[RMDB]
RNA sequence: GGGAACGACUCGAGUAGAGUCGAAAACAACGACCAGUGCCCCAUGUGCAUGAACAGCUCGCUGAAAGAUGUUGAUGGCGCCAAUGCUCAGGGCUAUGACACCGGAAUCGGUGGCUCCACAUCGACAUCAGUGAUCAUCCUUCGGGAUGAUCACUGAAAAAGAAACAACAACAACAAC
Reactivity to 2A3 in 0.01 (KOAc 150mM, MgCl2 10mM, bicine 150mM(pH8.5), 24C), signal-to-noise 1, nucleotides 027 to 126: c000a010a020c010g050a070c010c080a020g030u050g130c030c060c100c030a050u190g010u100g030c050a080u060g030a140a030c010a090g000c020u000c060g010c030u010g050a120a020a000g040a030u050g010u090u070g050a050u030g070g000c030g080c010c030a050a070u040g000c020u030c050a020g050g000g060c030u000a030u180g030a030c020a020c000c030g030g120a120a080u290c010g040g000u030g000g000c000u000c010c010a070c000a100u030c010g010a000c000a040
Reactivity to DMS in 0.01 (KOAc 150mM, MgCl2 10mM, bicine 150mM(pH8.5), 24C), signal-to-noise 2, nucleotides 027 to 126: c110a080a110c120g000a120c050c070a130g010u000g000c050c010c030c100a100u000g020u010g000c050a040u000g020a080a180c070a110g050c020u060c080g050c070u000g010a080a110a070g000a040u000g030u010u000g020a050u000g010g000c110g030c020c030a050a030u000g020c090u020c050a080g000g040g030c080u000a080u000g010a130c010a030c000c010g000g000a070a100u000c050g010g050u000g000g000c020u000c110c080a070c030a030u000c020g000a050c100a050
An RNA of 177 nucleotides, treated with 2A3 and DMS and read out base by base.